[RMDB]
RNA sequence: GGGAACGACUCGAGUAGAGUCGAAAAUGGAUUGCAUAGGUGCAGAACAUGGAACAUUGCAGUGGAAUUGAACUCCAAUGAGCUCAGCCCAACUACGAUAUUGGAGUGAGGAAUGCAUGAAGACAAAACCUUUAUUAUAAGUCUGUGUGUGUGUGUACGAUUAGGACCUAUUCGUAGGUCCUAAUCGAAAAGAAACAACAACAACAAC
Reactivity to DMS in 0.01 (KOAc 150mM, MgCl2 10mM, bicine 150mM(pH8.5), 24C), signal-to-noise 2, nucleotides 027 to 156: u000g010g000a140u020u000g030c040a090u000a110g060g010u000g000c050a080g010a130a110c060a070u000g000g010a090a070c040a090u010u010g040c050a110g020u010g010g000a090a090u010u000g000a070a050c010u000c050c040a060a110u000g010a080g030c010u010c030a090g010c020c030c010a050a030c040u010a110c030g010a120u010a060u000u000g090g000a110g010u000g010a100g000g010a060a090u010g000c000a050u000g010a090a000g000a070c010a050a060a050a180c060c010u000u000u010a070u060u000a120u000a090a150g010u000c030u040g000u000g010u000g010u000g010u000g000u000g000u000a110
Reactivity to 2A3 in 0.01 (KOAc 150mM, MgCl2 10mM, bicine 150mM(pH8.5), 24C), signal-to-noise 2, nucleotides 027 to 156: u100g030g010a030u010u150g000c050a040u050a140g010g000u030g030c030a000g020a090a010c030a060u060g050g030a060a050c040a080u040u180g000c160a030g020u080g010g100a070a180u080u140g010a030a020c010u030c000c000a040a020u080g020a080g000c010u040c090a040g010c010c010c010a070a050c040u190a050c020g090a090u060a030u140u050g000g000a010g010u010g000a050g000g040a060a010u020g000c050a030u080g090a020a010g000a030c040a050a110a050a070c000c000u010u110u110a150u080u060a090u110a140a020g020u000c050u060g040u030g000u000g010u010g020u020g020u010g000u010a020